Chemical mapping of a 177-nucleotide RNA with DMS. The data come from the RNA Mapping Database (RMDB), library M2PK50.

[RMDB]
RNA sequence: GGGAACGACUCGAGUAGAGUCGAAAAGGAGGCAAGUUCGCUUGCCUCCAAAGAAGCUCAAAUUGACGCAAACAUCCGCGUCAUCCCGAGCAAGCGAGGAAAAAACCGUGAACUUCGGUUCACGGAACUACCGUUAGGACUUCGGUCCUAACGGUAGAAAAGAAACAACAACAACAAC
Reactivity to DMS in 0.01 (KOAc 150mM, MgCl2 10mM, bicine 150mM(pH8.5), 24C), signal-to-noise 1, nucleotides 027 to 126: g000g020a020g000g020c000a000a010g000u030u040c230g010c000u010u000g020c000c000u000c000c010a000a020a010g000a140a180g020c000u000c020a040a030a020u000u030g010a030c000g010c000a150a040a140c280a160u000c180c180g010c020g060u000c020a040u020c020c040c000g000a010g010c000a140a150g000c170g000a140g020g030a000a130a010a000a070a060c000c000g030u000g000a000a000c000u010u000c230g000g010u000u000c000a000c000g030g010a010a050